The record gives the reactivity of an RNA of 177 nucleotides to 2A3 and DMS. DMS adducts were read by reverse transcription with MarathonRT.

RNA sequence: GGGAACGACUCGAGUAGAGUCGAAAAGUGUGGGCAGAGACACAGUAAGAUCACCACUCUCAAUCCAGCUACGAAAGCAAGGCAUUGAACUAUAAAACUAGCAAGAUUUGUAGGUGGUGUGUGUGUGUCAACUAUAGGCCUUCGGGCCUAUAGUUGAAAAAGAAACAACAACAACAAC
Reactivity to 2A3 in 0.01 (KOAc 150mM, MgCl2 10mM, bicine 150mM(pH8.5), 24C), signal-to-noise 1, nucleotides 027 to 126: g140u090g030u050g020g000g000c060a040g040a040g020a150c010a020c030a040g100u160a080a000g020a190u090c020a000c020c000a000c000u130c000u010c000a000a000u000c010c050a030g000c010u030a030c060g220a110a000a000g060c110a050a030g090g000c060a110u100u090g110a130a060c040u060a000u070a250a090a040a020c000u000a000g000c010a130a030g000a050u110u120u160g040u120a020g020g000u000g030g010u000g000u040g030u000g000u010g020u000g050
Reactivity to DMS in 0.01 (KOAc 150mM, MgCl2 10mM, bicine 150mM(pH8.5), 24C), signal-to-noise 3, nucleotides 027 to 126: g040u000g040u000g000g010g030c100a060g000a120g000a070c010a020c030a070g020u000a060a120g000a100u000c010a030c020c000a010c000u000c070u000c020a020a040u010c010c090a300g000c010u000a040c140g030a150a070a120g000c080a100a060g000g020c100a130u030u000g000a040a170c040u000a110u020a050a050a040a120c210u000a030g020c050a130a180g020a030u000u000u010g050u000a040g010g010u000g000g010u000g000u000g000u000g000u000g020u000g010
Source: RMDB library OK2TST, as collected in RNAgym. For 2A3 the reverse transcriptase was SuperScript II with manganese.